[RMDB]
RNA sequence: GGGAACGACUCGAGUAGAGUCGAAAAAGCACUGGUACGAUACGUCGUACCAGUGCAGUCGUUGGGAUGGAACGCAAUUAAAUACAUGUGUGACCUGUAUUUGCGAACGACGUAAUUAUUUUUCAAAAUCACGCUAUCGUGUUCGCACGAUAGCGAACAAGAAAACUACGUUCGCGUAGUUUUCUUGAAAAGAAACAACAACAACAAC
Reactivity to 2A3 in 0.01 (KOAc 150mM, MgCl2 10mM, bicine 150mM(pH8.5), 24C), signal-to-noise 5, nucleotides 027 to 156: a000g000c000a000c000u000g000g010u000a000c010g000a010u040a060c190g150u000c000g000u000a000c000c000a000g000u000g000c010a000g000u010c000g000u000u040g060g050g060a140u100g050g050a110a010c020g000c020a010a050u190u120a140a100a050u120a030c080a080u080g100u020g080u130g170a170c000c020u030g000u040a110u040u050u120g050c020g030a030a010c010g020a000c020g020u050a080a040u130u190a080u030u130u030u020u050c070a060a040a050a120u180c040a050c080g000c010u000a000u000c000g000u010g010u030u030c170g030c070a010c000g020a000u000a000g010c000g000a000a020
Reactivity to DMS in 0.01 (KOAc 150mM, MgCl2 10mM, bicine 150mM(pH8.5), 24C), signal-to-noise 3, nucleotides 027 to 156: a090g050c010a020c000u010g020g020u000a000c000g020a070u000a090c250g040u000c000g040u010a000c010c000a000g020u010g020c010a010g020u010c010g000u000u020g000g020g020a130u000g030g010a180a110c020g010c010a050a260u010u010a060a080a040u000a030c040a070u000g040u000g020u000g010a120c090c040u000g010u000a060u000u000u010g010c100g010a050a090c010g010a100c010g000u000a040a070u010u000a160u020u000u000u000u000c050a070a090a130a150u010c100a140c010g020c010u000a010u000c010g000u000g020u000u000c300g040c020a050c000g000a040u000a000g020c010g000a010a040
Chemical mapping of a 207-nucleotide RNA with 2A3 and DMS. For DMS, 8,388 sequencing reads were counted. It was measured as part of the RMDB library M2RFPK.